Structure probing data (DMS) for a 177-nucleotide construct. Reactivities are given for positions 27 through 126. For DMS, 3,061 sequencing reads were counted.

[RMDB]
RNA sequence: GGGAACGACUCGAGUAGAGUCGAAAAGAUAUGGAACGAUCCCGUUAAUGACCAUAUGGAGAUCGAGUAUCGGAAACGAUACGAGAUCGAUGAAAUAUGGUCAUUAACGGGAGUCGUUCCUAAGUCACCUUUGGGAUAAGUUCGCUUAUCCCAAAGGAAAAGAAACAACAACAACAAC
Reactivity to DMS in 0.01 (KOAc 150mM, MgCl2 10mM, bicine 150mM(pH8.5), 24C), signal-to-noise 3, nucleotides 027 to 126: g010a050u000a300u010g010g010a010a000c000g010a160u000c000c000c000g020u000u000a000a010u000g010a000c000c000a020u010a000u020g020g020a050g000a010u000c000g000a300g010u000a000u010c000g010g000a140a140a280c000g000a010u000a010c010g000a270g000a000u000c000g010a070u040g000a140a110a010u000a000u000g000g020u010c000a000u000u000a000a000c000g010g020g000a000g000u010c000g010u010u000c000c000u010a000a120g000u000c060a210